Background
This 177-nucleotide RNA was probed chemically with DMS and 2A3. It was measured as part of the RMDB library OK2TRN. Conditions: 150 mM KOAc, 10 mM MgCl2 and 150 mM bicine (pH 8.5), 24 C.
RNA sequence: GGGAACGACUCGAGUAGAGUCGAAAAAGUUGGGAGGAUCGCUUGAGCCCAGGAGUUUGAGGCUACAUUGAGCUGUGAUUGCACCACUGCACUCUAGCCUGGGCGACAGAGACAGACCCUGUCUCUGACACUGAUACGUUUUCGAACGUAUCAGUGUAAAAGAAACAACAACAACAAC
Reactivity to DMS in 0.01 (KOAc 150mM, MgCl2 10mM, bicine 150mM(pH8.5), 24C), signal-to-noise 7, nucleotides 027 to 126: a080g010u000u000g000g010g010a080g000g010a090u000c060g010c080u000u000g000a200g010c020c010c020a020g000g010a060g010u000u010u000g010a050g010g010c060u000a050c130a110u010u000g000a070g010c050u010g010u000g010a120u010u000g010c070a140c090c040a050c100u000g000c070a080c030u000c020u000a060g000c000c010u000g000g000g010c020g010a120c040a010g000a010g000a030c040a060g000a170c070c060c020u000g010u000c010u000c010u000g000
Reactivity to 2A3 in 0.01 (KOAc 150mM, MgCl2 10mM, bicine 150mM(pH8.5), 24C), signal-to-noise 3, nucleotides 027 to 126: a000g160u160u080g000g010g030a050g000g030a080u040c050g000c050u040u050g030a020g010c000c000c020a010g020g000a020g040u060u160u120g040a020g020g000c050u100a030c070a190u100u200g040a040g040c040u030g030u040g110a140u040u260g050c030a030c080c000a040c040u040g030c060a090c080u010c000u020a040g000c010c000u010g000g000g000c000g000a000c000a010g010a000g010a000c000a010g100a140c050c040c000u000g010u000c000u000c000u000g000